[RMDB]
RNA sequence: GGGAACGACUCGAGUAGAGUCGAAAACACAUGACUCUGUGGGUAUUAGAAGCGGUUUUGUAACGUCGACGACGUGAGGGAGCGGCGCGCAUAUUGCUCACUCAUGUACAUUAUGAAAGAGGAUAAAAGCAUUAAAUGACUUCGGUCAUUUAAUGCUAAAAGAAACAACAACAACAAC
Reactivity to DMS in 0.01 (KOAc 150mM, MgCl2 10mM, bicine 150mM(pH8.5), 24C), signal-to-noise 2, nucleotides 027 to 126: c120a120c060a090u000g000a090c050u000c030u000g000u010g020g000g020u000a060u000u000a080g010a120a100g010c060g000g000u000u020u010u010g000u010a130a110c060g010u000c050g000a130c190g010a060c010g010u000g000a080g000g000g000a030g010c000g000g000c070g010c090g020c070a090u000a070u000u000g000c000u000c000a070c030u010c000a020u010g030u010a040c140a080u000u000a040u000g000a030a040a080g010a050g020g000a090u000a040a080a120
Reactivity to 2A3 in 0.01 (KOAc 150mM, MgCl2 10mM, bicine 150mM(pH8.5), 24C), signal-to-noise 2, nucleotides 027 to 126: c020a000c010a060u070g040a030c010u000c050u070g030u050g040g040g000u090a050u030u090a070g050a140a020g020c030g100g000u020u040u060u140g040u050a040a040c010g020u020c030g060a150c120g000a010c000g000u010g020a030g020g030g010a010g030c030g030g000c030g000c000g020c050a000u070a030u100u120g000c000u000c000a010c020u030c000a010u020g010u040a040c000a060u080u230a070u180g020a070a060a020g090a020g000g050a050u080a150a180a000
This 177-nucleotide RNA was probed chemically with DMS and 2A3. The RNA was probed in 150 mM KOAc, 10 mM MgCl2 and 150 mM bicine (pH 8.5) at 24 C.